[RMDB]
RNA sequence: GGGAACGACUCGAGUAGAGUCGAAAAAGACUUGUAUUCGUACAAGUCUACAGAAAUUUCGCUAGCACACGAUCACACCUAGCGUACUCAAUAACGAUCGAACAACGUGUCAAUUCGUUGACACGAACAUUUAUAAUGCGUUCGCGCAUUAUAAAUGAAAAGAAACAACAACAACAAC
Reactivity to 2A3 in 0.01 (KOAc 150mM, MgCl2 10mM, bicine 150mM(pH8.5), 24C), signal-to-noise 9, nucleotides 027 to 126: a000g010a000c000u000u000g000u010a020u030u080c220g020u030a010c000a000a010g000u000c000u000a010c010a020g250a030a130a050u100u120u040c010g000c010u010a010g000c090a040c020a020c150g030a040u030c010a040c010a030c080c000u010a000g000c010g020u070a080c050u060c070a060a120u130a140a070c100g020a030u040c020g040a090a020c040a050a070c030g000u010g000u000c010a010a030u040u070c190g060u070u000g000a000c000a000c000g010a010a000
Reactivity to DMS in 0.01 (KOAc 150mM, MgCl2 10mM, bicine 150mM(pH8.5), 24C), signal-to-noise 9, nucleotides 027 to 126: a020g010a010c000u000u000g010u000a000u000u010c180g030u000a010c000a000a000g000u000c000u000a080c200a090g000a080a070a130u000u000u000c010g020c010u000a010g010c260a120c190a090c040g000a020u000c010a180c180a120c200c010u000a010g010c000g020u000a060c060u000c050a070a060u010a040a060c150g010a020u000c010g010a130a090c230a060a170c010g020u000g000u000c000a010a030u000u010c170g010u000u000g000a010c010a000c010g010a060a110